[RMDB]
RNA sequence: GGGAACGACUCGAGUAGAGUCGAAAAGAUAAGGAGUGCGAAAGCAAUCACUCUGUACACUAAGAUUGCAAGCACUCUGUAUCACGGGUAGAGCAGGGAAAACCCAGUGUACAGAGACCGACUAAAAGCAUAGUUGUACCUUCGGGUACAACUAUGCAAAAGAAACAACAACAACAAC
Reactivity to DMS in 0.01 (KOAc 150mM, MgCl2 10mM, bicine 150mM(pH8.5), 24C), signal-to-noise 2, nucleotides 027 to 126: g000a090u010a080a130g000g020a000g070u000g000c000g020a150a070a290g020c000a040a000u000c000a280c080u000c000u000g050u000a000c000a070c040u000a190a180g020a000u000u000g000c020a120a220g000c000a000c000u000c020u000g000u010a040u000c000a120c000g020g000g000u010a000g000a040g000c000a020g020g000g030a010a010a140a110c000c000c010a040g000u000g090u000a000c000a040g000a040g070a300c140c200g030a120c160u030a050a030a070a120
Reactivity to 2A3 in 0.01 (KOAc 150mM, MgCl2 10mM, bicine 150mM(pH8.5), 24C), signal-to-noise 4, nucleotides 027 to 126: g020a020u090a050a150g050g000a010g000u010g000c050g090a110a060a060g000c000a000a000u020c010a160c090u020c010u000g000u020a010c010a000c030u090a080a000g000a010u010u010g010c010a100a100g010c010a010c010u000c000u000g010u000a010u030c020a020c070g030g000g000u130a080g030a020g070c070a060g000g040g030a010a060a030a060c000c010c020a010g000u000g000u020a000c010a000g010a000g010a010c020c060g150a110c050u140a080a080a030a030
Background:
Chemical mapping of a 177-nucleotide RNA with DMS and 2A3. For 2A3 the reverse transcriptase was SuperScript II with manganese.